[RMDB]
RNA sequence: GGGAACGACUCGAGUAGAGUCGAAAACGAAAAAUAACAAUACAGGACUCAUAGCCGAGGCCCUGUAAUUGGAAUGAGUACACUUUAAAUCCUUUAACAAGGACCAAUUGGAGGGCAAGUCUGGUGCCCGACACUUGCACUUCGGUGCAAGUGUCGGAAAAGAAACAACAACAACAAC
Reactivity to DMS in 0.01 (KOAc 150mM, MgCl2 10mM, bicine 150mM(pH8.5), 24C), signal-to-noise 2, nucleotides 027 to 126: c070g030a040a080a060a150a030u010a140a150c050a040a060u020a060c040a040g000g010a260c000u000c050a090u000a300g030c160c170g000a070g000g080c080c000c010u010g000u000a030a010u000u000g010g000a150a010u000g000a100g030u000a030c110a100c040u070u000u020a050a150a230u000c000c000u000u000u000a070a170c150a130a010g000g000a010c080c070a010a060u040u030g000g030a030g000g000g000c030a060a010g030u040c100u010g000g040u000g030c060
Reactivity to 2A3 in 0.01 (KOAc 150mM, MgCl2 10mM, bicine 150mM(pH8.5), 24C), signal-to-noise 2, nucleotides 027 to 126: c010g120a000a050a000a010a140u150a000a020c030a060a030u140a020c040a000g040g050a050c000u000c020a120u210a080g030c050c050g000a010g030g020c020c000c000u100g180u100a000a000u000u090g010g040a070a120u130g030a000g050u140a030c100a000c070u120u020u000a050a040a100u080c010c000u000u000u080a060a100c100a020a010g000g000a000c000c000a000a010u020u110g020g080a000g010g000g000c010a040a000g030u020c070u130g080g030u060g030c000